[RMDB]
Background:
The record gives the reactivity of an RNA of 207 nucleotides to DMS and 2A3. Source: RMDB library M2RFPK, as collected in RNAgym. The 2A3 profile rests on 1,541 reads. 2A3 adducts were read by reverse transcription with SuperScript II with manganese. The reactions ran in a buffer of 150 mM KOAc, 10 mM MgCl2 and 150 mM bicine (pH 8.5), at 24 C.

RNA sequence: GGGAACGACUCGAGUAGAGUCGAAAAUUGUCGAAUGCCUGUGGAUCUACAUUUGUUGCGGGUUCGAGACCCGUCAGAGCCCGGCUCUGUAGCUCAAUGGUAGAGCGGUGUAUUCACAUAAACUUGUAAAAGACACGUGCCUUCGGGCACGUGUCAAGUAUAAUUGUAGCUUCGGCUACAAUUAUACAAAAGAAACAACAACAACAAC
Reactivity to DMS in 0.01 (KOAc 150mM, MgCl2 10mM, bicine 150mM(pH8.5), 24C), signal-to-noise 2, nucleotides 027 to 156: u000u000g030u000c030g000a060a070u000g020c030c040u000g030u000g000g000a080u000c030u000a030c020a090u000u000u010g010u000u000g010c000g010g000g000u000u020c050g020a300g000a060c000c020c010g050u020c070a070g000a060g010c010c110c130g040g000c030u000c020u000g030u010a040g030c010u010c020a030a120u000g010g050u000a060g000a070g110c010g000g010u010g000u000a120u000u000c020a010c020a070u000a090a110a120c070u000u000g030u000a110a110a090a200g000a010c030a000c010g030u000g010c000c020u010u020c300g040g020g010c000a000c020g020u000g000u000c000a000a060
Reactivity to 2A3 in 0.01 (KOAc 150mM, MgCl2 10mM, bicine 150mM(pH8.5), 24C), signal-to-noise 2, nucleotides 027 to 156: u090u070g040u040c050g030a090a040u090g040c010c050u030g000u020g040g000a040u000c030u070a020c020a040u080u110u140g040u030u010g010c020g000g000g000u010u030c020g000a000g010a030c010c000c010g020u010c000a010g000a020g020c110c290c080g160g000c000u000c020u030g020u010a000g020c010u010c010a030a030u180g280g030u180a010g000a000g000c020g020g020u030g000u030a020u020u010c010a010c010a020u150a060a100a100c090u080u030g040u090a030a140a030a010g000a000c010a000c000g000u000g000c000c000u020u030c220g000g010g020c000a000c000g000u000g000u000c000a000a000